This 207-nucleotide RNA was probed chemically with 2A3. The 2A3 profile rests on 814 reads.
[RMDB]
RNA sequence: GGGAACGACUCGAGUAGAGUCGAAAAUCUGCAGACGCCUCUGUCUCCUUCCAGACCUCGGUUUCCUUGUCUUUAAAAUGGGGGCAGCCGCGAGAGCCAUGGGGGCUCCCGUGAGGACGCGUCGCCUGGCCCGGGGAUGCACGUGUGGUGUUUGUCACUGAUAUGACUCAUUCGUGAGUCAUAUCAGAAAAGAAACAACAACAACAAC
Reactivity to 2A3 in 0.01 (KOAc 150mM, MgCl2 10mM, bicine 150mM(pH8.5), 24C), signal-to-noise 1, nucleotides 027 to 156: u050c010u080g000c040a080g000a040c020g030c010c010u120c040u060g010u040c020u030c000c000u170u000c060c030a030g010a040c020c030u060c130g050g050u070u110u190c070c000u090u070g020u070c000u100u140u160a030a300a030a050u110g000g000g020g000g000c010a010g060c020c000g000c000g020a040g000a000g000c000c060a170u250g070g040g090g010g000c000u010c010c000c030g010u040g050a220g060g040a040c080g010c020g000u010c020g000c010c010u060g000g000c000c000c030g040g010g000g010a070u060g040c090a050c070g090u120g030u030g040g040u050g040u000u060u000g030u060c070a010